[RMDB]
RNA sequence: GGGAACGACUCGAGUAGAGUCGAAAAUGGUGUUAAGUGGAAUAAGUGGAAAAAUAUACAUAUAUGUACAGGGGGCUACAUAUAUGUAUAUGCCCCCUCGUGGAAGUAUAAGUAGGUAUAAGGUGGAGAUAGGACCGUAUUUCGAUACGGUCCUAUCAAAAGAAACAACAACAACAAC
Reactivity to DMS in 0.01 (KOAc 150mM, MgCl2 10mM, bicine 150mM(pH8.5), 24C), signal-to-noise 2, nucleotides 027 to 126: u010g010g030u020g000u030u030a090a120g010u020g020g010a110a060u010a050a060g020u030g000g000a040a060a070a100a040u000a000u010a010c010a040u000a020u010a010u000g000u010a070c080a110g000g030g000g010g010c140u010a000c030a020u010a040u010a040u000g000u010a010u020a020u020g010c040c000c020c000c000u010c020g000u000g010g020a050a080g020u000a010u010a020a110g040u000a030g010g000u010a070u010a060a060g010g020u020g010g000a280
Reactivity to 2A3 in 0.01 (KOAc 150mM, MgCl2 10mM, bicine 150mM(pH8.5), 24C), signal-to-noise 2, nucleotides 027 to 126: u070g000g000u000g050u130u040a130a000g020u090g070g020a060a120u050a190a020g020u180g060g030a020a040a000a070a080u040a000u000a050c000a000u050a000u000a010u080g030u020a030c040a050g060g030g000g000g040c000u000a010c000a010u040a000u020a000u020g010u000a000u000a010u010g000c000c000c000c000c000u020c010g020u000g010g060a070a010g020u030a050u000a180a030g060u060a030g060g020u040a070u030a100a100g060g010u040g000g050a030
The record gives the reactivity of an RNA of 177 nucleotides to DMS and 2A3. For 2A3 the reverse transcriptase was SuperScript II with manganese. The reactions ran in a buffer of 150 mM KOAc, 10 mM MgCl2 and 150 mM bicine (pH 8.5), at 24 C. DMS adducts were read by reverse transcription with MarathonRT.